Annotation:
An RNA of 177 nucleotides, treated with DMS and read out base by base. DMS adducts were read by reverse transcription with MarathonRT. The data come from the RNA Mapping Database (RMDB), library OK2TRN.
RNA sequence: GGGAACGACUCGAGUAGAGUCGAAAAUUAGAUACCAUAACAGAACUUGGAGCUAUUGGCUCUUGACACUUAAGGCUAUAAAUAUAGGCGACAAAGCUCCUCUUCCUAUAUCGUUGGGACAAGUGCAACCCACUACCGAAUUCGUUCGGUAGUGGGUAAAAGAAACAACAACAACAAC
Reactivity to DMS in 0.01 (KOAc 150mM, MgCl2 10mM, bicine 150mM(pH8.5), 24C), signal-to-noise 1, nucleotides 027 to 126: u030u000a180g010a200u010a190c040c020a100u020a070a060c110a050g040a130a060c160u000u000g010g000a000g030c040u000a100u020u000g020g000c020u030c010u010u000g010a150c050a010c090u000u010a120a060g030g010c060u030a060u000a080a040a060u000a040u000a000g010g010c300g020a070c120a040a010a140g000c090u000c010c000u000c010u000u000c000c010u000a080u000a000u000c100g000u000u000g000g000g000a040c050a040a000g000u000g020c190a050